This 207-nucleotide RNA was probed chemically with 2A3 and DMS. 2A3 adducts were read by reverse transcription with SuperScript II with manganese. The RNA was probed in 150 mM KOAc, 10 mM MgCl2 and 150 mM bicine (pH 8.5) at 24 C.
[RMDB]
RNA sequence: GGGAACGACUCGAGUAGAGUCGAAAAUCCCUUUCGAGGGAUGAACGGCGUACUACGACUACAGCAAGCUCCGGCUAGGGCUGUCCCAAAUAGGACAGUACCAAACCGGAGUGAUGACCUGUAGAGAACGUAUCGCAAUCGGUCAAUUCGUUGACAAUCAACGAUUAUACUUCGGUAUAAUCGUUGAAAAAGAAACAACAACAACAAC
Reactivity to 2A3 in 0.01 (KOAc 150mM, MgCl2 10mM, bicine 150mM(pH8.5), 24C), signal-to-noise 3, nucleotides 027 to 156: u000c000c000c000u000u080u030c160g090a040g000g020g000a060u070g070a140a030c060g030g000c000g050u030a040c030u000a000c020g240a140c060u020a010c010a010g020c020a100a050g000c040u000c000c000g010g000c010u060a050g000g000g000c000u030g000u000c020c040c020a240a300a070u300a010g040g000a000c010a010g000u130a300c020c000a010a010a000c000c010g000g010a000g000u000g000a000u020g040a000c000c030u000g000u020a010g010a040g050a100a010c010g000u010a030u300c000g000c040a040a070u180c090g010g020u040c030a080a080u250u140c170g150u080u050g070a120c120a050a020
Reactivity to DMS in 0.01 (KOAc 150mM, MgCl2 10mM, bicine 150mM(pH8.5), 24C), signal-to-noise 2, nucleotides 027 to 156: u010c000c000c000u060u050u000c130g010a060g040g020g010a050u000g020a100a040c040g000g000c000g040u010a090c090u010a140c040g050a250c000u000a010c020a020g040c020a130a300g000c000u000c000c000g000g010c000u020a300g010g010g000c000u000g010u000c000c040c000a060a230a130u010a070g020g010a020c000a010g030u010a040c040c010a060a120a060c000c000g010g000a000g000u010g010a040u000g000a210c300c000u000g050u000a000g010a210g000a110a210c050g000u000a040u000c050g000c050a080a070u000c080g000g000u000c000a010a100u000u000c100g070u000u010g020a060c050a120a300